[RMDB]
RNA sequence: GGGAACGACUCGAGUAGAGUCGAAAAAUCCGUGGAUAUCGGGAGCGCACCGCUCCUCCUCCGGCUGUUCUCCUUCACAGCUAUGACCCAUGCGCCGCACAGGCAGUGUCCCGCUUCGUGUGCAAAAAAAACCGCCAGUACUUCGGUACUGGCGGAAGGUUGGAUUCUAGUUCGCUAGAAUCCAACCAAAAGAAACAACAACAACAAC
Reactivity to 2A3 in 0.01 (KOAc 150mM, MgCl2 10mM, bicine 150mM(pH8.5), 24C), signal-to-noise 1, nucleotides 027 to 156: a000u050c040c040g010u070g000g060a080u030a050u300c050g000g000g000a000g000c050g030c030a050c120c120g010c050u040c000c010u010c000c010u030c020c030g100g000c050u030g030u110u030c050u050c030c030u150u130c080a000c010a050g050c030u050a050u230g060a100c030c020c000a000u080g030c050g030c110c060g000c000a010c000a010g030g090c030a030g000u010g020u010c000c000c000g060c030u050u040c040g140u000g000u000g000c040a000a000a000a000a000a000a120a270c000c000g000c010c000a000g000u030a020c000u030u140c200g010g000u000a000c000u000g040g000c010g000g000a010a010